Chemical mapping of a 207-nucleotide RNA with 2A3. Reactivities are given for positions 27 through 156. The data come from the RNA Mapping Database (RMDB), library VIROID.
[RMDB]
RNA sequence: GGGAACGACUCGAGUAGAGUCGAAAAUCCUUAUCCUUCUUUCCGAGAAUUCCUUUGAUGUUUCCCAGCCAGGGAUUGUCGUCCUCAAGUUUCUUGAUUUUCUUCUUAACCUUCCGGAGGUCCCUCUCGAGUUCCUCUAACUUCUUUCUUCCGUUCACUGUUAUCAAUGGUUCGCCAUUGAUAACAGAAAAGAAACAACAACAACAAC
Reactivity to 2A3 in 0.01 (KOAc 150mM, MgCl2 10mM, bicine 150mM(pH8.5), 24C), signal-to-noise 3, nucleotides 027 to 156: u030c010c000u030u090a130u100c000c020u050u080c040u100u140u030c030c020g040a010g070a160a080u040u070c040c000u090u080u090g060a080u100g080u030u060u020c000c000c000a030g040c040c020a040g010g020g040a040u010u090g060u040c040g000u020c000c030u030c040a080a050g050u000u110u060c010u070u100g050a100u140u050u070u000c020u080u040c010u080u050a080a100c000c010u040u050c020c010g080g020a010g000g030u040c030c000c000u020c020u020c020g050a040g040u040u010c000c000u000c020u020a050a110c030u040u070c000u060u100u040c000u140u030c030c030g070u040u050c050a020